[RMDB]
RNA sequence: GGGAACGACUCGAGUAGAGUCGAAAAUAGGGUCCCUGUUACCUACGGGUGGGAACACAGGGAUGCUUGGGAGGGUCCUUGAGGGCGGGUUUGGGAAUCCCGGGACAUAACUUCGGGUCUGUAAUGGCCGGAUAGAUAAGUUCGCUUAUCUAUCCGGAAAAGAAACAACAACAACAAC
Reactivity to 2A3 in 0.01 (KOAc 150mM, MgCl2 10mM, bicine 150mM(pH8.5), 24C), signal-to-noise 1, nucleotides 027 to 126: u120a010g000g000g050u020c020c020c000u040g020u050u050a050c000c020u040a080c120g140g080g110u180g040g040g110a070a000c050a020c020a100g070g000g020a030u060g080c030u010u030g000g040g090a140g050g000g040u020c070c000u050u230g050a040g020g010g300c210g050g000g000u150u300u120g040g000g000a000a060u020c000c040c000g000g030g000a020c020a130u120a070a070c040u020u070c020g020g000g000u000c010u070g050u080a120a050u050g080g000
Reactivity to DMS in 0.01 (KOAc 150mM, MgCl2 10mM, bicine 150mM(pH8.5), 24C), signal-to-noise 1, nucleotides 027 to 126: u010a070g030g010g000u000c000c000c020u010g020u010u000a300c020c020u000a230c130g000g000g020u000g030g080g000a050a060c220a040c020a010g010g000g000a040u000g000c030u000u000g020g000g000a150g000g000g000u000c010c020u000u010g000a140g020g000g000c160g000g000g000u000u000u000g020g010g010a130a160u000c060c000c010g000g040g000a110c140a120u000a030a040c090u020u000c060g020g020g000u000c010u000g020u000a080a080u000g010g020